[RMDB]
RNA sequence: GGGAACGACUCGAGUAGAGUCGAAAAUCGCCAAAUCGACCACCAGCCCGAGCACUCGCGGUUGUUGGCGGACAAUGCUGAUGCUGAUCACGACAUCGCGAACGCGCCCGAAGGAUUCGCCGAGCGGAGCAGUAACGACUUUCGAGUCGUUACUGCUAAAAGAAACAACAACAACAAC
Reactivity to DMS in 0.01 (KOAc 150mM, MgCl2 10mM, bicine 150mM(pH8.5), 24C), signal-to-noise 2, nucleotides 027 to 126: u020c040g020c020c060a060a060a120u020c040g020a120c020c000a080c110c030a110g000c010c010c010g000a060g030c150a100c100u000c050g020c140g020g020u000u000g010u010u010g000g020c030g000g030a090c140a130a060u010g000c040u010g000a090u000g010c050u000g000a060u010c080a100c030g020a090c050a040u000c020g030c010g010a060a110c100g000c040g000c050c020c000g000a060a110g010g000a180u000u000c040g010c080c040g000a080g020c040g000g000
Reactivity to 2A3 in 0.01 (KOAc 150mM, MgCl2 10mM, bicine 150mM(pH8.5), 24C), signal-to-noise 2, nucleotides 027 to 126: u070c010g040c010c010a120a050a080u070c030g150a160c010c010a000c000c020a000g000c000c010c010g020a030g090c090a110c190u020c000g010c040g040g000u060u020g000u030u020g030g000c000g020g000a020c040a030a140u180g010c020u110g060a060u070g040c030u080g020a140u130c040a020c090g110a060c000a020u040c010g020c030g040a050a010c050g020c000g030c020c020c020g030a040a030g140g050a090u120u130c030g000c020c020g010a040g010c050g080g020